An RNA of 177 nucleotides, treated with DMS and 2A3 and read out base by base.
RNA sequence: GGGAACGACUCGAGUAGAGUCGAAAACAGAGUGUCCUAUAGAAACAAGCACUUAUAGUGUUAGAUAUUGGAAAGUUCUACAGUGUAUAUCAGCAAUUGCCAGUCUUCCUGUUUCUGACAGUGAGAACAGUUCGUAGUUGUUCGCAACUACGAACUGAAAAGAAACAACAACAACAAC
Reactivity to DMS in 0.01 (KOAc 150mM, MgCl2 10mM, bicine 150mM(pH8.5), 24C), signal-to-noise 2, nucleotides 027 to 126: c080a120g000a080g020u010g020u010c030c110u010a140u000a110g020a130a130a060c130a090a090g000c010a010c010u010u020a190u000a120g040u000g030u000u000a070g010a030u010a090u000u010g000g010a070a030a090g000u000u000c040u000a060c070a050g000u000g000u000a110u000a080u020c080a100g030c040a050a030u000u000g010c020c050a060g000u000c040u000u010c080c020u010g000u000u000u010c090u000g000a030c100a030g020u020g020a110g000a050a100
Reactivity to 2A3 in 0.01 (KOAc 150mM, MgCl2 10mM, bicine 150mM(pH8.5), 24C), signal-to-noise 2, nucleotides 027 to 126: c040a010g020a040g070u060g030u070c020c020u060a060u020a160g090a070a120a000c060a160a000g010c010a020c020u060u130a100u140a200g030u020g000u040u040a050g010a060u050a020u050u080g020g040a100a090a050g030u020u090c040u050a060c030a080g070u040g000u090a050u020a020u230c010a020g040c060a060a150u080u040g020c080c020a040g010u030c010u060u040c010c000u000g050u020u000u090c020u000g030a000c020a040g050u010g100a020g090a090a010
Values cover nucleotides 27 to 126.
The RNA was probed in 150 mM KOAc, 10 mM MgCl2 and 150 mM bicine (pH 8.5) at 24 C.